[RMDB]
RNA sequence: GGGAACGACUCGAGUAGAGUCGAAAAAGAUAUGGAGGCUAAAGAAGGCGAAGAACAUGGGUGAAACCAUGUCGGAAACGACAUGGGAGUAUGCCCAUGGGAGCCUUCGAUUGGCCUCCUAAGUCAACCUAUACACCUGGUUCGCCAGGUGUAUAGGAAAAGAAACAACAACAACAAC
Reactivity to 2A3 in 0.01 (KOAc 150mM, MgCl2 10mM, bicine 150mM(pH8.5), 24C), signal-to-noise 1, nucleotides 027 to 126: a000g040a020u050a010u110g010g000a020g010g000c030u040a010a050a070g010a010a010g000g010c060g270a250a010g000a050a010c010a010u000g000g010g000u050g030a000a000a010c000c010a000u000g000u020c000g020g050a060a050a040c020g010a000c000a000u000g000g020g000a010g010u020a010u290g000c060c000c000a000u000g000g030g000a010g020c000c010u000u010c000g000a000u010u060g000g000c000c010u000c000c000u000a000a000g000u010c020a000a020
Reactivity to DMS in 0.01 (KOAc 150mM, MgCl2 10mM, bicine 150mM(pH8.5), 24C), signal-to-noise 4, nucleotides 027 to 126: a090g000a030u000a300u000g000g000a010g020g020c010u000a050a100a270g010a020a020g020g030c000g000a090a180g020a110a180c010a010u000g000g000g030u000g000a200a260a200c010c000a000u000g000u000c000g010g000a090a070a110c010g010a010c000a010u000g000g000g020a040g000u000a070u020g000c020c000c000a000u010g000g000g000a110g010c000c000u000u000c000g010a140u010u000g010g000c000c000u010c000c010u000a010a050g000u010c040a140a210

Structure probing data (2A3 and DMS) for a 177-nucleotide construct.
Source: RMDB library TTRDES, as collected in RNAgym.
The RNA was probed in 150 mM KOAc, 10 mM MgCl2 and 150 mM bicine (pH 8.5) at 24 C.
For DMS the reverse transcriptase was MarathonRT.
The 2A3 profile rests on 8,083 reads.